[RMDB]
RNA sequence: GGGAACGACUCGAGUAGAGUCGAAAAGAUAUGGAGACUAUGGAGAUUAGCAUAGGACCGUUGAAACGCUUCGGAAACGAAGCGUGGAGGUCCUAUGACCUAAUCGAUGAAAUAGUCUCCUAAGUCACACUCUAAAUCGGUUCGCCGAUUUAGAGUGAAAAGAAACAACAACAACAAC
Reactivity to DMS in 0.01 (KOAc 150mM, MgCl2 10mM, bicine 150mM(pH8.5), 24C), signal-to-noise 2, nucleotides 027 to 126: g000a020u000a300u020g010g000a000g020a020c010u010a000u000g010g000a050g000a020u000u000a000g000c010a000u000a010g020g020a010c000c000g020u000u000g000a200a190a030c000g000c000u000u000c010g000g000a110a140a270c000g010a000a000g010c010g000u000g010g000a030g010g010u000c000c000u000a000u000g000a110c300c000u000a020a000u000c010g000a040u040g000a120a110a000u000a020g010u000c000u000c000c000u000a020a080g000u000c030a300
Overview: Chemical mapping of a 177-nucleotide RNA with DMS. In probing experiments dimethyl sulfate is read out at A N1 and C N3, which are open when not base-paired. DMS adducts were read by reverse transcription with MarathonRT. Values are in units of 0.01, from 0 to 300, in steps of 10. The reactions ran in a buffer of 150 mM KOAc, 10 mM MgCl2 and 150 mM bicine (pH 8.5), at 24 C. It was measured as part of the RMDB library TTRINS. For DMS, 1,458 sequencing reads were counted.